[RMDB]
RNA sequence: GGGAACGACUCGAGUAGAGUCGAAAAGAUUAGGCAGAUUACAACUAUUACGCGUCUUGCCACUGUAUUGUAAAGUAAACAACAAGAUAUAAGUUUAAUACACCUACGCGACAAGAUGAAUCAGCAAGUACUCCGUUAUAUUCGUAUAACGGAGUACAAAAGAAACAACAACAACAAC
Reactivity to DMS in 0.01 (KOAc 150mM, MgCl2 10mM, bicine 150mM(pH8.5), 24C), signal-to-noise 6, nucleotides 027 to 126: g000a130u010u000a060g010g010c040a070g020a080u000u010a060c140a040a080c080u000a070u000u010a090c170g020c060g010u000c010u000u000g010c020c020a090c060u000g000u000a020u010u000g010u000a040a080a150g000u000a020a020a020c040a070a090c120a060a070g000a100u000a060u010a070a100g010u000u000u000a020a070u000a030c040a020c140c090u000a030c070g010c040g000a030c030a020a030g000a040u000g000a050a050u000c060a060g010c120a060a080
Reactivity to 2A3 in 0.01 (KOAc 150mM, MgCl2 10mM, bicine 150mM(pH8.5), 24C), signal-to-noise 5, nucleotides 027 to 126: g040a030u110u190a050g080g000c040a010g060a090u070u080a100c040a160a010c060u060a040u210u130a070c090g000c000g020u000c020u040u030g010c020c020a020c050u080g030u030a080u090u060g080u080a030a110a160g050u030a050a050a020c020a060a010c010a050a050g100a100u090a020u040a190a040g010u000u050u030a070a030u070a030c010a020c020c020u030a010c020g000c010g000a030c010a030a020g020a040u040g010a020a040u030c010a020g030c010a040a040
An RNA of 177 nucleotides, treated with DMS and 2A3 and read out base by base.
It was measured as part of the RMDB library M2PK90.
The DMS profile rests on 6,072 reads.